[RMDB]
An RNA of 177 nucleotides, treated with 2A3 and DMS and read out base by base. It was measured as part of the RMDB library OK1LIB. The RNA was probed in 150 mM KOAc, 10 mM MgCl2 and 150 mM bicine (pH 8.5) at 24 C. For DMS the reverse transcriptase was MarathonRT.
RNA sequence: GGGAACGACUCGAGUAGAGUCGAAAAUUAUUAAUGCUAUUGAUGCACCUAAACAUGCCCAUAUAUCUGGUCAAGUUGAAUUUACAAGCAUGAUGCAUUAUCUGUCACUAUGGGCACUAGCGGCAGGCAUAUCACGCUUUUUCGAAAGCGUGAUAUGAAAAGAAACAACAACAACAAC
Reactivity to 2A3 in 0.01 (KOAc 150mM, MgCl2 10mM, bicine 150mM(pH8.5), 24C), signal-to-noise 9, nucleotides 027 to 126: u180u140a030u060u080a040a010u030g020c060u080a030u100u090g090a030u030g010c040a080c040c040u080a070a060a010c040a050u060g020c000c000c000a040u080a030u030a030u150c130u070g030g000u020c040a090a090g030u060u070g130a160a130u140u160u170a150c080a060a030g010c010a020u060g020a010u060g030c010a020u040u020a040u080c010u000g020u010c000a000c060u010a060u130g030g040g040c050a040c040u010a010g000c010g000g000c010a000g020g030
Reactivity to DMS in 0.01 (KOAc 150mM, MgCl2 10mM, bicine 150mM(pH8.5), 24C), signal-to-noise 7, nucleotides 027 to 126: u020u050a080u020u010a010a030u000g000c020u040a140u000u010g020a030u010g000c030a110c100c070u010a060a050a030c100a090u010g000c040c000c000a050u030a090u030a100u030c200u000g000g000u000c030a050a080g020u000u010g010a110a080u030u020u040a090c160a060a070g010c020a010u000g000a040u010g000c020a010u010u010a020u030c020u000g000u000c020a060c030u000a010u010g000g000g020c060a040c090u000a010g000c070g000g010c020a000g000g020